[RMDB]
RNA sequence: GGGAACGACUCGAGUAGAGUCGAAAAACAACAGAUAGCUGGAACCAGCGUAGAAUUCUACGCAUAUCCAUAGCGAAUGGUACCUGUAAAGAAAAUAAUGAGCGAUGUACAAGUACCAACAGCGCUCAAUGCCAUGGUGAUGUCAAUCACAUAUGCACCUGAUGGCAUCAUUCGUGAUGCCAUCAGGAAAAGAAACAACAACAACAAC
Reactivity to 2A3 in 0.01 (KOAc 150mM, MgCl2 10mM, bicine 150mM(pH8.5), 24C), signal-to-noise 1, nucleotides 027 to 156: a000c030a000a040c030a040g050a090u100a000g030c000u000g000g010a090a110c080c100a090g000c000g000u000a000g030a120a300u300u250c000u010a000c010g000c000a010u010a000u000c000c000a000u170a040g000c010g070a030a130u040g020g020u030a010c060c060u010g140u160a000a220a000g090a000a120a050a010u170a010a070u230g000a000g040c000g000a000u000g010u030a030c010a000a110g010u030a110c000c000a050a150c000a020g000c000g000c000u000c040a000a090u040g000c040c000a000u090g050g060u000g000a000u000g300u300c070a140a010u110c000a000c010a070u110a070u090g000c000a000
An RNA of 207 nucleotides, treated with 2A3 and read out base by base. Reactivities are given for positions 27 through 156.